[RMDB]
RNA sequence: GGGAACGACUCGAGUAGAGUCGAAAAUGAAUCGCGCUUCGGCGCGAUUCAAAAACCUUUGUGUACAUGUAGCAACAGCCCUAUUACUCCCAUUGGGAGUAUAGGGACAUGCUAUUUGUACACUCUGGUAAAAUAGGUUCUAGUUCGCUAGAACCUAACGAUGAGCUAAGUUCGCUUAGCUCAUCGUAAAAGAAACAACAACAACAAC
Reactivity to 2A3 in 0.01 (KOAc 150mM, MgCl2 10mM, bicine 150mM(pH8.5), 24C), signal-to-noise 2, nucleotides 027 to 156: u120g000a000a000u000c000g030c010g020c040u090u120c300g130g010c110g000c010g060a000u000u000c000a000a000a020a000a000c010c010u020u020u000g010u000g000u000a000c000a000u010g010u010a040g010c010a020a120c110a240g040c020c040c000u040a030u080u130a030c010u010c020c070c160a300u160u300g020g010g000a010g010u000a000u000a000g000g000g010a000c000a000u000g000c000u000a000u020u010u010g000u000a000c000a000c000u000c010u000g000g000u070a040a110a030a070u050a000g000g010u000u000c000u000a010g030u010u060c300g020c100u000a000g000a000a000c000c000u020a010